[RMDB]
RNA sequence: GGGAACGACUCGAGUAGAGUCGAAAAGUUACUGUUAAACCUAAGAGGUUACGCAAAAAGCGUAAUGUUGACCCUUUGUCCAAUUUUGAACAUAAGGUUAUUACAGAGUGCGUUACCAUAGUUUUAGACCGGCACCCGUUCGCGGGUGCCAAAAGAAACAACAACAACAAC
Reactivity to 2A3 in 0.01 (KOAc 150mM, MgCl2 10mM, bicine 150mM(pH8.5), 24C), signal-to-noise 2, nucleotides 027 to 129: g080u160u130a040c010u020g000u000u110a000a070a000c040c000u030a070a000g150a120g080g000u000u000a000c000g000c020a070a060a050a000a010g120c000g060u060a020a020u030g020u040u030g100a080c000c010c000u000u000u140g040u000c050c000a140a150u120u140u180u180g000a020a000c000a010u070a070a000g000g000u000u000a000u030u010a040c100a000g040a060g120u000g000c010g000u000u070a000c000c000a000u070a060g000u000u000u000u000a060g000a040c010c000
Reactivity to DMS in 0.01 (KOAc 150mM, MgCl2 10mM, bicine 150mM(pH8.5), 24C), signal-to-noise 2, nucleotides 027 to 129: g080u070u040a120c170u070g000u020u000a040a110a010c080c030u020a080a100g000a170g050g020u010u010a000c030g030c000a050a010a080a110a060g110c140g020u000a000a060u000g010u000u020g030a070c100c000c070u030u000u000g000u000c010c020a080a200u060u000u120u010g030a110a000c000a010u040a050a020g000g040u000u010a090u000u030a000c060a150g030a070g000u010g020c000g000u020u020a060c010c000a020u110a080g000u010u000u000u000a000g000a110c120c020